[RMDB]
This 177-nucleotide RNA was probed chemically with 2A3. Source: RMDB libraries RFM100 and RFMREP, as collected in RNAgym.

RNA sequence: GGGAACGACUCGAGUAGAGUCGAAAAUCAAUGAUCCAAUUUGUCUACCGCAUCAUUCAGUCAUUUAACGAGUCUAGUUUGAAUUUGGGUGACUCGGUAUGUGGAUGAAUGAGUCGGAAGCUAAUUGGGACUACCGAUGUUUCGACAUCGGUAGUCCAAAAGAAACAACAACAACAAC
Reactivity to 2A3 in 0.01 (KOAc 150mM, MgCl2 10mM, bicine 150mM(pH8.5), 24C), signal-to-noise 2, nucleotides 027 to 126: u180c110a070a200u130g090a000u140c020c000a000a010u000u000u020g080u010c000u020a050c000c000g050c010a080u000c000a000u000u000c040a020g030u000c030a040u010u000u000a030a010c000g000a000g000u000c000u000a090g280u090u080u250g270a160a130u120u050u140g140g100g040u080g000a000c000u000c000g000g000u000a020u020g010u010g000g000a020u000g000a000a000u000g020a020g070u020c000g020g000a000a000g000c000u000a000a000u030u030g030